[RMDB]
RNA sequence: GGGAACGACUCGAGUAGAGUCGAAAACAGUGUGGUACCUGCACAAACAGCCAGAUAGACGACUGCCGCCGGCCUGAUGGCACCAUAGCUUCUGACUGCCAGGACAUGGCCAAAGAAUGGCUGGUGCGCUUGGAUGAAUAUUCGUAUUCAUCCAAGCAAAAGAAACAACAACAACAAC
Reactivity to 2A3 in 0.01 (KOAc 150mM, MgCl2 10mM, bicine 150mM(pH8.5), 24C), signal-to-noise 3, nucleotides 027 to 126: c020a020g050u040g010u020g110g000u060a080c020c030u060g010c050a010c020a060a240a010c040a030g130c040c010a030g010a090u110a060g150a080c080g030a040c060u040g030c030c020g000c000c020g030g000c000c000u040g030a050u040g020g000c020a020c020c050a030u080a070g060c030u040u000c010u020g080a160c080u120g050c100c000a000g000g010a000c000a070u060g000g000c010c010a050a030a020g080a060a070u110g000g010c010u010g000g010u020g000c060
Reactivity to DMS in 0.01 (KOAc 150mM, MgCl2 10mM, bicine 150mM(pH8.5), 24C), signal-to-noise 4, nucleotides 027 to 126: c090a060g020u000g030u000g000g000u010a070c090c020u010g000c050a050c070a090a080a230c120a020g010c030c040a060g010a110u020a090g000a110c100g000a100c090u010g040c070c030g030c030c010g000g010c040c020u000g000a110u000g000g010c050a080c080c030a040u010a120g020c100u000u000c030u020g010a220c130u010g000c110c000a010g010g000a060c080a050u000g010g010c020c050a080a050a070g000a140a110u010g000g010c020u010g000g020u000g000c130